RNA sequence: GGGAACGACUCGAGUAGAGUCGAAAAGAUGCCAAGGUGAACACAUGCUACCCAAUUCUCCAGUCUCUGACCAAUGGUUACCAGAUGCCAUCUGUGUACAAGUCAUUGAUCACUGACUUGCAACCUGCUGACAUUCCAAACUACCAUGCUUACACCCUCUUACGCGGAACUUCGGUUCCGCGUAAGAAAAAGAAACAACAACAACAAC
Reactivity to 2A3 in 0.01 (KOAc 150mM, MgCl2 10mM, bicine 150mM(pH8.5), 24C), signal-to-noise 1, nucleotides 027 to 156: g050a000u120g020c000c000a110a030g100g050u150g110a140a040c080a000c010a090u090g000c000u040a050c000c020c000a040a170u040u000c030u000c050c000a000g050u000c000u000c030u050g070a060c000c050a000a040u040g000g040u000u080a110c040c010a020g010a000u190g140c020c020a080u070c010u030g070u010g020u020a010c020a030a000g000u000c010a000u010u110g050a050u070c010a010c040u040g010a000c000u000u050g000c030a000a130c010c020u040g000c030u000g000a040c010a070u110u000c000c000a060a000a000c020u070a050c000c000a000u030g020c010u050u000a010c020a040c010c000c000